[RMDB]
RNA sequence: GGGAACGACUCGAGUAGAGUCGAAAAUGAUUGAGCGUAGCACACACUCAGACUGUACGACAGUCUGACACACACCUACGCUAGUGCUUCGUGUGUGUGAUAUCGAUGUAGCACGAAAAUGAAGUAAGUUUCUCACAGGAUUCGUCCUGUGAGAAACAAAAGAAACAACAACAACAAC
Reactivity to DMS in 0.01 (KOAc 150mM, MgCl2 10mM, bicine 150mM(pH8.5), 24C), signal-to-noise 2, nucleotides 027 to 126: u010g020a160u000u000g000a160g000c010g000u010a050g000c090a060c070a090c080a080c190u000c010a010g010a010c000u010g000u000a170c210g040a130c000a010g010u000c000u000g020a000c060a070c090a060c060a100c240c030u010a000c010g000c000u000a070g020u000g000c040u000u010c050g040u000g020u010g010u000g020u010g020a150u010a050u010c090g010a050u000g020u010a140g000c040a010c020g000a010a050a060a070u010g030a030a120g030u000a110a100
Reactivity to 2A3 in 0.01 (KOAc 150mM, MgCl2 10mM, bicine 150mM(pH8.5), 24C), signal-to-noise 2, nucleotides 027 to 126: u210g030a110u110u230g080a030g010c010g010u000a010g030c150a030c000a000c000a020c060u010c000a000g000a000c000u020g010u250a150c130g160a060c230a000g000u000c000u000g020a030c000a010c010a000c010a000c080c010u020a010c020g000c010u010a010g060u030g060c000u030u040c030g040u020g000u000g000u010g020u040g070a070u030a040u190c070g050a080u100g020u040a000g000c010a020c060g040a060a090a000a050u140g030a090a000g040u120a140a050